[RMDB]
RNA sequence: GGGAACGACUCGAGUAGAGUCGAAAAUGCUACAAGUUCGUCCUUUGGGAUUAUGAACGUAGCAAUAUUUAUGGUACUGCUACUAUUGGUGUAUGUAAGUACACUGAUAUUGAUGUUAAUUCAGCUUAGCCGGGACCCUUCGGGGUCCCGAAAAGAAACAACAACAACAAC
Reactivity to 2A3 in 0.01 (KOAc 150mM, MgCl2 10mM, bicine 150mM(pH8.5), 24C), signal-to-noise 3, nucleotides 027 to 129: u040g020c000u000a030c000a030a260g000u010u000c010g000u010c000c000u100u130u220g100g000g000a020u060u040a120u300g020a020a030c030g010u000a000g000c020a010a000u130a100u000u210u020a180u150g010g000u000a010c050u060g020c000u020a040c000u030a050u000u000g000g000u000g000u070a000u020g200u020a020a120g040u000a000c000a000c000u000g000a000u010a020u090u070g070a040u160g060u170u150a110a000u100u030c000a000g000c030u070u020a050g000c010
Reactivity to DMS in 0.01 (KOAc 150mM, MgCl2 10mM, bicine 150mM(pH8.5), 24C), signal-to-noise 2, nucleotides 027 to 129: u020g000c030u010a100c000a000a070g060u000u030c050g010u100c020c010u000u240u100g010g000g040a020u000u110a130u080g000a000a050c010g030u000a020g040c060a020a000u020a070u000u000u000a110u020g090g000u030a080c080u000g010c120u030a120c050u010a000u000u000g010g020u000g120u090a000u000g040u130a050a090g000u050a000c010a000c000u030g070a000u020a000u060u050g080a210u040g030u070u000a120a160u070u000c150a030g040c070u000u050a120g000c000

Annotation: An RNA of 170 nucleotides, treated with 2A3 and DMS and read out base by base. Reactivities are rounded to 0.1 and cut off at 0 and 3. For 2A3, 2,319 sequencing reads were counted.